[RMDB]
Annotation:
This 177-nucleotide RNA was probed chemically with 2A3 and DMS. DMS adducts were read by reverse transcription with MarathonRT. The 2A3 profile rests on 13,996 reads. Conditions: 150 mM KOAc, 10 mM MgCl2 and 150 mM bicine (pH 8.5), 24 C.
RNA sequence: GGGAACGACUCGAGUAGAGUCGAAAAGAAAUUGUCGUCCUCGGCGGACAGCAGGGCAUGGAUGAAGUCCUGCGGGAUGUCGGCGAAGCGGAUCGGCGUCCGGCGCAUCUCGCCGAACUCGGAGAUCGCUAUUAUAACAGUUCGCUGUUAUAAUAGCAAAAGAAACAACAACAACAAC
Reactivity to 2A3 in 0.01 (KOAc 150mM, MgCl2 10mM, bicine 150mM(pH8.5), 24C), signal-to-noise 7, nucleotides 027 to 126: g020a010a090a020u150u090g050u040c030g020u010c010c020u010c020g030g010c010g000g020a040c030a020g010c000a000g000g020g010c030a050u180g090g150a150u150g140a150a030g010u000c000c000u000g000c000g000g000g000a030u050g020u030c000g010g020c020g040a090a020g090c070g060g060a150u080c030g040g010c020g030u010c020c000g040g000c040g000c020a060u030c080u050c050g000c000c010g010a030a030c030u030c060g070g020a080g020a050u110c080
Reactivity to DMS in 0.01 (KOAc 150mM, MgCl2 10mM, bicine 150mM(pH8.5), 24C), signal-to-noise 6, nucleotides 027 to 126: g010a080a090a110u000u010g010u000c040g010u000c020c020u000c040g020g010c030g010g000a180c100a100g010c020a020g010g000g000c020a080u020g020g020a140u020g010a130a090g000u000c010c000u000g010c010g010g000g000a130u000g010u000c020g010g020c060g010a100a110g010c080g020g000a080u010c040g010g010c100g010u000c010c000g020g010c040g010c180a090u000c100u000c010g020c020c010g000a020a040c070u000c040g010g010a150g000a080u010c110